[RMDB]
RNA sequence: GGGAACGACUCGAGUAGAGUCGAAAAGAUAGCAUGUUCGCGUUGGCUGGAAGAGCAGCGGUGUAGCAUGACGACCCACUGAUGGAAUAGGCGGCCGAGCACAUGGCGAUAGUAAACGAAGCAUGUCGAGCAGUCCACCCAACCCCGAUGGACGUGGCAGAGUUGCAUGGUUCGCCAUGCAACUCUGAAAAGAAACAACAACAACAAC
Reactivity to 2A3 in 0.01 (KOAc 150mM, MgCl2 10mM, bicine 150mM(pH8.5), 24C), signal-to-noise 2, nucleotides 027 to 156: g110a040u180a020g020c010a000u030g010u050u020c040g000c020g000u060u020g110g040c050u090g050g130a110a040g070a080g060c020a000g000c000g000g080u140g020u110a020g020c020a000u000g040a070c000g020a000c020c030c000a030c040u090g070a120u150g010g100a140a040u030a060g130g000c000g000g000c040c030g000a030g060c030a040c020a050u010g080g030c010g020a040u010a020g110u160a030a090a070c030g020a050a000g000c060a040u040g020u080c020g000a030g000c030a010g070u000c020c010a010c000c000c020a050a110c010c000c010c010g020a030u040g000g060a070c070g020u000g010g020